RNA sequence: GGGAACGACUCGAGUAGAGUCGAAAACUCACUCACUACGGUGAGUGAGAAUCUUAAGGCUCAAUAAAGCUUGCCUUGAGGUCCCUCAAGCAGAUAUAGACUGAAACAUUUAGUAUCACCAAGCAGGGAGCAACGGCUCGAGUACGCUCGAGCCGAAAUAUUAGCAUAUCUUCGGAUAUGCUAAUAUAAAAGAAACAACAACAACAAC
Reactivity to DMS in 0.01 (KOAc 150mM, MgCl2 10mM, bicine 150mM(pH8.5), 24C), signal-to-noise 2, nucleotides 027 to 156: c010u010c010a030c000u000c000a030c000u010a100c300g060g010u030g000a010g000u000g010a020g000a030a020u000c010u010u000a040a070g010g000c000u000c050a090a160u000a120a120a170g020c110u000u000g010c000c020u000u000g030a080g010g000u000c010c010c030u000c070a090a080g020c000a240g010a120u010a140u000a120g030a230c060u010g010a070a100a120c050a100u000u000u000a110g020u000a080u000c020a110c030c030a070a090g020c030a080g030g000g020a080g000c040a080a110c000g020g000c000u000c010g000a050g060u000a050c280g030c000u000c000g030a020g010c000c000g000a010a030
Reactivity to 2A3 in 0.01 (KOAc 150mM, MgCl2 10mM, bicine 150mM(pH8.5), 24C), signal-to-noise 4, nucleotides 027 to 156: c000u000c010a010c000u000c000a000c010u040a000c210g110g000u000g000a000g000u000g010a010g000a000a020u010c000u020u040a010a010g020g000c010u020c110a090a190u190a270a150a060g060c120u110u070g000c000c000u000u010g000a000g020g030u010c010c010c000u030c050a060a060g010c050a010g070a040u070a030u100a130g160a080c060u080g060a070a130a020c030a040u090u100u140a050g050u040a050u080c020a030c120c020a040a000g060c030a050g040g000g050a050g040c020a110a030c020g000g010c010u000c000g000a000g000u020a040c210g030c100u000c000g020a000g000c000c000g000a000a000
Chemical mapping of a 207-nucleotide RNA with DMS and 2A3. Source: RMDB library OK3TST, as collected in RNAgym. 2A3 adducts were read by reverse transcription with SuperScript II with manganese. Values cover nucleotides 27 to 156. The RNA was probed in 150 mM KOAc, 10 mM MgCl2 and 150 mM bicine (pH 8.5) at 24 C. For DMS, 3,571 sequencing reads were counted. For 2A3, 2,381 sequencing reads were counted.